[RMDB]
RNA sequence: GGGAACGACUCGAGUAGAGUCGAAAAGAAGAGAAGUGAGUAAACGCCUAUGCGGUAUAAGCACAGCCCGUCAAAAGGCGUGCGGCGAGGGCACCGGACGCUGUGCUUAUAACUGGGCCAUCGAAGAAAUGCUAUGGGUAUUCGUACCCAUAGCAUUAAAAGAAACAACAACAACAAC
Reactivity to DMS in 0.01 (KOAc 150mM, MgCl2 10mM, bicine 150mM(pH8.5), 24C), signal-to-noise 4, nucleotides 027 to 126: g000a060a060g000a050g000a060a060g010u010g010a080g010u030a050a090a110c210g020c000c020u000a060u010g010c120g040g000u010a010u000a010a000g000c000a000c000a020g000c090c200c040g020u010c070a060a080a060a120g010g020c130g020u000g010c020g020g000c070g000a080g000g000g010c010a040c020c020g000g010a060c070g000c000u000g000u000g000c010u010u000a000u000a040a080c050u000g020g000g010c030c120a060u020c070g000a110a090g000a090
Reactivity to 2A3 in 0.01 (KOAc 150mM, MgCl2 10mM, bicine 150mM(pH8.5), 24C), signal-to-noise 4, nucleotides 027 to 126: g110a030a000g060a000g030a140a020g040u080g070a030g040u100a060a080a090c040g010c010c000u080a100u210g100c070g030g000u000a000u000a000a000g000c000a000c000a000g000c000c050c060g010u030c030a040a010a080a060g120g050c080g000u010g000c010g030g040c120g070a120g060g080g000c010a000c020c010g030g000a010c040g000c010u000g000u000g000c000u010u000a000u000a020a020c010u030g010g010g000c000c000a070u090c060g090a070a060g050a060
An RNA of 177 nucleotides, treated with DMS and 2A3 and read out base by base. The data come from the RNA Mapping Database (RMDB), library OK1LIB. DMS adducts were read by reverse transcription with MarathonRT. For 2A3, 4,445 sequencing reads were counted. The DMS profile rests on 9,917 reads. For 2A3 the reverse transcriptase was SuperScript II with manganese.